Structure probing data (2A3 and DMS) for a 177-nucleotide construct. The RNA was probed in 150 mM KOAc, 10 mM MgCl2 and 150 mM bicine (pH 8.5) at 24 C. Values are in units of 0.01, from 0 to 300, in steps of 10. Values cover nucleotides 27 to 126.

RNA sequence: GGGAACGACUCGAGUAGAGUCGAAAAACAUGGAACUUACGGAAUUAUUUUGUCAUGACUGAGUUAUUAAUUAAAGAACACUUCAUAGGACUAUUCAAUGGUUUAACUAUGGCUGAUGACUUGCAAGUGCAUCUUGGAGAUUCGUCUCCAAGAUGCAAAAAGAAACAACAACAACAAC
Reactivity to 2A3 in 0.01 (KOAc 150mM, MgCl2 10mM, bicine 150mM(pH8.5), 24C), signal-to-noise 2, nucleotides 027 to 126: a000c100a020u090g040g050a000a090c020u160u000a010c110g040g120a160a130u090u070a080u090u300u070u040g150u070c070a020u030g020a070c100u030g020a010g130u070u190a070u080u170a140a070u050u080a040a010a150g130a150a000c120a000c060u000u050c020a040u000a050g010g000a000c060u080a090u120u140c050a280a070u060g120g000u090u010u000a030a030c000u010a000u040g000g010c000u060g090a140u030g000a040c040u030u090g070c060a250a080g000
Reactivity to DMS in 0.01 (KOAc 150mM, MgCl2 10mM, bicine 150mM(pH8.5), 24C), signal-to-noise 2, nucleotides 027 to 126: a130c070a030u030g000g050a120a020c040u030u000a050c120g000g000a140a110u090u000a050u000u010u030u000g000u030c030a060u010g000a100c090u000g000a040g010u000u000a010u000u000a070a010u060u030a080a040a070g000a080a070c010a140c060u000u000c110a000u080a010g050g020a000c100u000a080u000u010c230a020a120u040g000g010u000u000u050a080a100c000u010a030u000g080g070c030u000g010a120u000g010a020c060u030u000g020c120a100a090g000

DMS adducts were read by reverse transcription with MarathonRT. For DMS, 1,478 sequencing reads were counted.